[RMDB]
RNA sequence: GGGAACGACUCGAGUAGAGUCGAAAAAUGGAGGAGUCCGUGGCAUUCAGGUUGGCUAAGGAGGGAUGAACCGGGCCAGGGGUGAAAACCAGCAGCCAAGAGUUCCCGUGGUAGGCAGUAGUGGGAUAGCGUACCGGAGUGGACUGCCGUUAUCAGCCUAUUAGUAUCCGUUCGCGGAUACUAAUAGAAAAGAAACAACAACAACAAC
Reactivity to 2A3 in 0.01 (KOAc 150mM, MgCl2 10mM, bicine 150mM(pH8.5), 24C), signal-to-noise 2, nucleotides 027 to 156: a000u070g010g010a000g020g010a000g060u030c050c020g010u050g010g020c090a080u070u100c050a030g000g020u060u050g060g030c020u040a050a090g050g000a020g010g040g000a030u040g030a060a050c050c030g010g010g000c020c020a040g000g010g020g000u060g040a030a020a020a050c030c000a000g000c000a030g000c010c010a060a010g050a010g070u000u010c000c000c010g000u020g040g000u020a040g010g000c050a040g010u110a010g020u090g000g080g010a100u070a030g040c020g010u040a060c060c020g020g020a040g020u120g020g000a010c010u020g070c030c000g020u040u020a120u090c010a000g030c010
Reactivity to DMS in 0.01 (KOAc 150mM, MgCl2 10mM, bicine 150mM(pH8.5), 24C), signal-to-noise 1, nucleotides 027 to 156: a120u000g010g000a050g020g010a200g020u000c000c010g050u000g040g010c040a140u000u010c090a100g000g010u000u030g000g000c070u000a050a090g020g020a110g000g020g020a150u000g000a080a070c020c000g000g030g010c030c030a070g230g010g030g050u000g000a080a030a060a080c050c000a070g030c030a150g020c020c000a030a130g010a170g000u000u000c000c010c020g000u030g040g030u010a050g030g050c050a060g030u010a060g020u000g030g020g000a140u000a070g030c030g000u000a060c040c030g000g010a080g020u000g010g000a080c060u000g020c020c020g050u000u010a070u000c060a110g060c130
Chemical mapping of a 207-nucleotide RNA with 2A3 and DMS. Source: RMDB library ARCHII, as collected in RNAgym. As a SHAPE reagent, 2A3 marks flexible, mostly unpaired nucleotides at the ribose 2'-OH. For DMS the reverse transcriptase was MarathonRT.